[RMDB]
RNA sequence: GGGAACGACUCGAGUAGAGUCGAAAACACGGGCUGAGGUGUAUAACAAAGGAACAUGCAACUGUUUGCAGCUACCUGAAUGAAUGACAAAUAAAGCCAAUCUUCAAUUAAGUGCAAAAAACAGUUAUCUCUGUACUGAAUUCGUUCAGUACAGAGAAAAAGAAACAACAACAACAAC
Reactivity to DMS in 0.01 (KOAc 150mM, MgCl2 10mM, bicine 150mM(pH8.5), 24C), signal-to-noise 3, nucleotides 027 to 126: c040a080c060g000g010g020c010u000g010a100g010g020u000g010u000a050u000a070a060c120a050a090a120g010g000a040a120c090a060u010g040c040a070a040c060u000g000u000u000u000g010c100a090g000c050u010a060c300c060u000g010a030a040u000g010a020a040u000g010a030c050a060a090a200u020a050a080a070g010c010c010a020a050u000c030u000u000c040a030a060u010u010a070a110g030u000g000c030a010a020a110a080a030a070c060a020g000u000u000a140
Reactivity to 2A3 in 0.01 (KOAc 150mM, MgCl2 10mM, bicine 150mM(pH8.5), 24C), signal-to-noise 3, nucleotides 027 to 126: c010a010c010g040g050g000c020u020g030a000g090g060u050g030u060a190u080a190a050c080a060a070a020g090g020a090a040c020a030u180g030c030a040a010c010u010g010u070u050u030g020c030a100g000c020u050a040c000c000u020g060a030a020u160g030a030a010u070g010a030c010a080a210a030u210a120a150a000g020c000c000a000a020u000c000u020u030c020a050a090u080u110a160a030g060u030g060c000a090a070a000a090a050a000c020a010g030u050u060a100
Source: RMDB library OK2TRN, as collected in RNAgym.
The record gives the reactivity of an RNA of 177 nucleotides to DMS and 2A3.
The reactions ran in a buffer of 150 mM KOAc, 10 mM MgCl2 and 150 mM bicine (pH 8.5), at 24 C.